[RMDB]
RNA sequence: GGGAACGACUCGAGUAGAGUCGAAAAUCCAGAUUCGUCUGGAGAUUGAGGGGUCUUCCGUUUGACGUUGUCAGCUGUACCUGAAGCCUCCACGGGUAUACAGCUUGGAUUUACCGAGGAAGACGGAGGCACCCGAGGACGUGAGUUCGCUCACGAACCUAGUUAUCACGUUCGCGUGAUAACUAGGAAAAGAAACAACAACAACAAC
Reactivity to DMS in 0.01 (KOAc 150mM, MgCl2 10mM, bicine 150mM(pH8.5), 24C), signal-to-noise 3, nucleotides 027 to 156: u000c000c000a050g050a090u000u000c300g030u000c000u020g000g020a030g050a130u000u010g010a160g000g000g010g020u030c000u000u000c000c000g040u010u010u000g040a150c130g050u010u010g020u010c090a100g010c010u030g000u000a010c020c020u010g000a040a090g020c010c010u010c010c060a300c020g030g020g000u010a140u000a030c010a020g020c010u000u020g040g010a180u000u000u000a060c060c030g000a220g000g010a150a040g010a030c020g000g010a060g050g040c020a090c010c010c000g010a240g020g010a180c020g030u000g000a070g010u000u010c260g010c040u010c000a030c000g020a060a140
Reactivity to 2A3 in 0.01 (KOAc 150mM, MgCl2 10mM, bicine 150mM(pH8.5), 24C), signal-to-noise 6, nucleotides 027 to 156: u000c010c000a010g030a020u050u160c200g060u000c100u000g010g010a030g010a060u100u170g100a150g050g020g010g000u010c000u070u010c020c040g100u070u080u190g150a130c110g020u100u160g160u200c020a000g000c000u000g010u010a020c000c000u020g020a100a020g040c020c010u020c040c010a010c010g000g000g000u070a090u020a180c020a010g000c000u020u140g100g010a090u120u050u250a080c040c020g030a050g070g040a050a010g010a000c000g020g000a000g000g000c000a050c000c000c000g060a090g040g050a040c020g000u010g000a000g000u090u220c240g010c100u000c010a000c010g030a040a060
The data come from the RNA Mapping Database (RMDB), library RNAMAK. Chemical mapping of a 207-nucleotide RNA with DMS and 2A3. High DMS reactivity at an A or C suggests that its Watson-Crick edge is free. 2A3 adducts were read by reverse transcription with SuperScript II with manganese. The reactions ran in a buffer of 150 mM KOAc, 10 mM MgCl2 and 150 mM bicine (pH 8.5), at 24 C.